[RMDB]
RNA sequence: GGGAACGACUCGAGUAGAGUCGAAAAGCUAGCAAAUGUUAGUGGAACAACGGGAGUAAGGUUCUCCCUGGUUCACUAACGUGCGAUGACCCAGAUUGCUGGGAGGUAGAUGCAGUCUCCUGCAAACGUAAAUACUAUUAUUCGUAAUAGUAUUUACAAAAGAAACAACAACAACAAC
Reactivity to 2A3 in 0.01 (KOAc 150mM, MgCl2 10mM, bicine 150mM(pH8.5), 24C), signal-to-noise 9, nucleotides 027 to 126: g010c010u040a010g000c000a020a030a100u200g000u000u000a000g000u000g040g010a010a020c020a020a040c050g000g000g000a010g010u100a080a060g200g070u180u020c000u000c000c000c000u000g020g000u000u000c000a000c000u000a000a000c000g000u000g000c000g030a040u080g040a030c000c000c000a000g040a080u020u050g000c030u040g010g000g000a000g000g000u060a020g010a130u080g030c010a000g020u000c000u000c000c000u010g000c000a020a010a010c050
Reactivity to DMS in 0.01 (KOAc 150mM, MgCl2 10mM, bicine 150mM(pH8.5), 24C), signal-to-noise 9, nucleotides 027 to 126: g010c050u010a140g000c010a020a100a070u040g010u000u000a010g010u000g010g010a010a010c010a080a110c220g000g000g000a020g010u020a110a150g020g020u040u020c000u000c000c000c000u000g000g010u000u000c000a010c000u000a000a000c010g010u000g000c040g010a110u020g000a160c000c000c010a110g000a150u010u010g010c000u030g010g000g010a020g010g010u000a080g010a100u020g000c120a130g000u010c010u000c010c010u000g000c020a020a050a110c190
Structure probing data (2A3 and DMS) for a 177-nucleotide construct. The 2A3 profile rests on 69,667 reads. Values cover nucleotides 27 to 126.